Chemical mapping of a 177-nucleotide RNA with 2A3 and DMS. For 2A3, 30,443 sequencing reads were counted. The reactions ran in a buffer of 150 mM KOAc, 10 mM MgCl2 and 150 mM bicine (pH 8.5), at 24 C. For DMS, 48,400 sequencing reads were counted.
RNA sequence: GGGAACGACUCGAGUAGAGUCGAAAACGUCGUGAACUAGCGACAAUGCGGUAGGUCCAUCGUUAUCUAACCGAAACAUCGUGACUAGUCGUAGAAUAGAACCAGGAGAGGUCGCUGGCAAACAAAGACGGGGUGUCUGAUUCGUCGGACGUCCCGUAAAAGAAACAACAACAACAAC
Reactivity to 2A3 in 0.01 (KOAc 150mM, MgCl2 10mM, bicine 150mM(pH8.5), 24C), signal-to-noise 8, nucleotides 027 to 126: c040g030u030c010g010u030g060a060a020c010u000a020g000c000g010a010c000a010a030u070g010c000g010g010u030a020g020g020u000c010c010a110u050c070g030u040u030a100u020c020u020a030a090c020c020g000a010a010a000c020a030u040c020g040u050g050a020c010u010a020g020u010c010g020u030a010g030a070a020u070a040g040a030a030c020c010a010g020g040a070g010a020g010g050u010c000g000c010u000g000g000c020a010a030a020c030a010a110a010g130
Reactivity to DMS in 0.01 (KOAc 150mM, MgCl2 10mM, bicine 150mM(pH8.5), 24C), signal-to-noise 9, nucleotides 027 to 126: c090g010u020c070g010u010g010a190a160c050u000a040g010c060g000a020c040a100a080u020g000c020g000g000u010a100g000g000u000c040c040a090u020c160g010u010u010a070u010c050u000a080a070c120c060g010a070a070a100c070a080u010c110g000u010g010a060c020u000a120g010u000c030g010u010a050g010a070a070u020a050g000a070a100c070c070a060g000g000a090g000a070g010g000u000c010g000c010u010g010g000c060a050a120a060c110a050a070a100g000